[RMDB]
RNA sequence: GGGAACGACUCGAGUAGAGUCGAAAAGCCGACGAUCGCGAAAACCGUGCAGACGCGCAGUGUCUUGACCGCGCCCAGCUGAUCACGGACGAAAUCGCCGGCAAAGCGCAUUGCCGCCAUGGUCAGCCCGACUAUGGACGUUCGCGUCCAUAGUCGGAAAAGAAACAACAACAACAAC
Reactivity to 2A3 in 0.01 (KOAc 150mM, MgCl2 10mM, bicine 150mM(pH8.5), 24C), signal-to-noise 2, nucleotides 027 to 126: g000c000c010g000a000c000g000a000u050c040g040c040g030a000a230a000a090c010c000g000u020g000c000a000g040a080c000g010c000g000c090a110g000u040g030u140c150u080u180g130a050c080c060g010c000g010c000c000c020a000g000c000u000g000a110u080c000a000c000g030g030a020c030g050a010a010a020u020c000g000c000c010g000g000c000a000a080a000g020c060g070c080a150u120u300g060c130c000g000c000c000a060u070g090g070u180c180a120g060c000